[RMDB]
RNA sequence: GGGAACGACUCGAGUAGAGUCGAAAAGUAGAGUGUAUCAUGUCAGUAAGCAUGCCGGGGAAUGGUGGUUUACCCCGUUAUCAAAUGAUUACCGACCAAUAAUUGGCGAAACUCGUUUCGCGUUGGAAAAGUCACGGCGUGUUCGCACGCCGUGAAAUAUCUAACUUGGUUUCGACCAAGUUAGAUAAAAAGAAACAACAACAACAAC
Reactivity to DMS in 0.01 (KOAc 150mM, MgCl2 10mM, bicine 150mM(pH8.5), 24C), signal-to-noise 2, nucleotides 027 to 156: g000u000a070g040a120g020u010g030u000a080u010c040a060u010g010u010c050a030g000u020a080a070g030c020a020u000g030c200c050g040g020g030g030a070a140u000g010g030u010g040g020u000u000u000a220c030c010c010c040g030u000u000a040u000c280a060a040a020u000g020a070u000u000a020c010c000g030a060c020c090a050a120u010a040a220u000u010g010g010c000g000a050a100a060c040u000c160g000u000u000u000c000g010c110g000u000u000g010g000a060a050a100a200g010u000c010a000c020g000g050c000g000u000g030u010u000c260g010c020a010c000g010c000c000g000u000g000a010a010a080
Reactivity to 2A3 in 0.01 (KOAc 150mM, MgCl2 10mM, bicine 150mM(pH8.5), 24C), signal-to-noise 4, nucleotides 027 to 156: g120u130a020g040a030g040u090g020u050a040u140c030a020u060g070u040c060a050g090u120a090a010g040c010a010u030g030c040c010g010g000g000g010a030a030u040g010g010u030g010g000u020u030u080a040c000c000c010c010g040u040u030a020u020c030a030a030a030u090g020a010u040u050a010c000c020g060a060c010c060a040a000u140a120a090u160u090g080g000c000g000a010a030a030c050u070c090g040u010u040u020c010g000c010g000u010u030g020g060a080a100a010a020g070u030c000a000c000g000g000c010g020u010g010u010u010c080g020c050a000c020g000c000c000g000u000g000a000a000a000